Structure probing data (DMS and 2A3) for a 207-nucleotide construct. The reactions ran in a buffer of 150 mM KOAc, 10 mM MgCl2 and 150 mM bicine (pH 8.5), at 24 C. Reactivities are given for positions 27 through 156. The 2A3 profile rests on 5,076 reads. The data come from the RNA Mapping Database (RMDB), library PDB130.
[RMDB]
RNA sequence: GGGAACGACUCGAGUAGAGUCGAAAAAUGGCGAGACGAUACGAUGGGAACUAUUUUCCACAAUGGGAAAUGGGUUCACAUUUGAGCUAGAGUCCAUGAUAUUCUGGGCAAUAGUCAAAGCGACCCAAAUCCAUUUUGGUAACGCCGGAACCAUAGGCUUGAAGAGGAUGUUCGCAUCCUCUUCAAGAAAAGAAACAACAACAACAAC
Reactivity to DMS in 0.01 (KOAc 150mM, MgCl2 10mM, bicine 150mM(pH8.5), 24C), signal-to-noise 3, nucleotides 027 to 156: a070u000g020g020c000g010a300g010a080c030g020a190u000a050c050g020a120u010g020g000g020a060a050c130u000a140u010u010u010u010c000c000a070c110a100a060u010g010g030g010a010a010a280u000g010g020g010u020u000c050a030c050a150u000u000u010g010a110g040c030u000a020g000a300g010u000c000c010a050u000g020a150u000a140u000u000c080u000g000g030g000c010a040a180u000a030g020u000c020a050a050a070g020c070g000a070c050c000c010a010a050a250u010c010c010a100u000u000u000u000g040g010u010a050a080c040g020c000c010g000g000a090a030c000c000a030u010a130g010g000
Reactivity to 2A3 in 0.01 (KOAc 150mM, MgCl2 10mM, bicine 150mM(pH8.5), 24C), signal-to-noise 5, nucleotides 027 to 156: a000u080g010g010c040g020a050g040a080c070g040a040u060a140c060g080a120u130g040g010g040a070a020c070u080a170u160u100u050u020c010c000a000c030a020a010u030g030g020g040a020a030a040u010g010g000g000u120u140c040a030c020a120u020u010u020g010a060g050c000u000a000g000a000g010u000c000c010a010u100g080a040u120a150u300u140c060u020g000g000g000c000a000a050u010a010g010u010c000a010a000a010g010c030g010a000c000c010c000a000a030a000u010c000c000a000u020u010u010u040g020g000u020a040a020c010g000c000c000g000g020a010a000c010c000a050u090a060g120g010